[RMDB]
RNA sequence: GGGAACGACUCGAGUAGAGUCGAAAAAAAGAUAUGGAGCCUGUCCCUCCUUGGAUUUAGUGGGUACAGUAUUCGGAAACGAAUACCGAGGCCCACUUGUCAGGAGUCACAGGCUCCUAAGUCAAAACAUUGUGAACUUGUUCGCAAGUUCACAAUGAAAAGAAACAACAACAACAAC
Reactivity to DMS in 0.01 (KOAc 150mM, MgCl2 10mM, bicine 150mM(pH8.5), 24C), signal-to-noise 3, nucleotides 027 to 126: a090a060a070g000a050u000a300u010g000g010a010g000c010c000u000g000u010c080c060c000u000c000c010u010u010g020g000a040u000u010u000a000g030u000g000g000g000u000a000c000a030g000u000a000u010u000c000g000g000a120a130a230c000g020a010a000u000a000c000c000g000a300g000g010c000c000c000a000c010u010u000g000u010c000a010g010g010a010g020u000c150a010c010a010g010g000c000u000c000c000u000a010a060g000u000c030a140a080a120a210
Reactivity to 2A3 in 0.01 (KOAc 150mM, MgCl2 10mM, bicine 150mM(pH8.5), 24C), signal-to-noise 1, nucleotides 027 to 126: a010a020a060g070a010u100a070u110g000g010a010g000c000c010u020g000u020c020c000c000u060c000c020u040u130g160g000a060u300u300u000a040g020u010g060g020g000u050a010c010a030g010u000a000u000u000c040g050g000a080a150a060c000g000a030a000u000a000c000c050g050a160g020g000c030c000c000a000c000u000u000g000u020c000a000g020g000a000g000u010c000a010c020a000g020g010c000u010c010c000u000a000a010g010u000c000a000a000a000a220
Structure probing data (DMS and 2A3) for a 177-nucleotide construct. For DMS, 3,670 sequencing reads were counted. Reactivities are given for positions 27 through 126. The RNA was probed in 150 mM KOAc, 10 mM MgCl2 and 150 mM bicine (pH 8.5) at 24 C.